[RMDB]
RNA sequence: GGGAACGACUCGAGUAGAGUCGAAAAACUAGUAUUUACAGGGGUAAGUUGACCUGUCAUCUAGACAACUUACCAGGUACUCAAAGGUAAGUUGGUUGAGUACCACAGAGUACGAACUAAGUACUCAGACUAAGGAUGCCUUCGGGUAUCUUUAGUCAAAAGAAACAACAACAACAAC
Reactivity to 2A3 in 0.01 (KOAc 150mM, MgCl2 10mM, bicine 150mM(pH8.5), 24C), signal-to-noise 6, nucleotides 027 to 126: a000c030u050a020g100u040a140u070u020u060a070c050a020g060g010g000g030u030a040a020g010u030u030g080a110c010c010u020g050u060c010a080u040c030u060a020g050a080c010a010a010c000u010u000a000c000c000a010g000g020u020a010c010u010c040a030a020a010g080g020u070a030a080g060u040u020g020g000u000u020g010a000g010u000a000c000c000a010c030a020g000a000g000u000a000c000g050a160a060c060u080a100a030g000u000a000c000u000c020a010
Reactivity to DMS in 0.01 (KOAc 150mM, MgCl2 10mM, bicine 150mM(pH8.5), 24C), signal-to-noise 9, nucleotides 027 to 126: a100c030u000a050g010u030a060u030u000u020a070c150a090g010g010g000g010u000a010a010g010u010u000g000a100c070c020u010g000u030c280a110u030c110u030a020g010a150c000a010a000c000u000u000a010c000c000a090g000g020u010a010c020u010c030a000a030a040g000g000u020a070a090g010u000u010g000g000u000u000g000a020g010u000a010c000c000a100c180a080g000a010g010u000a000c000g000a100a120c230u020a080a100g010u000a000c000u000c000a130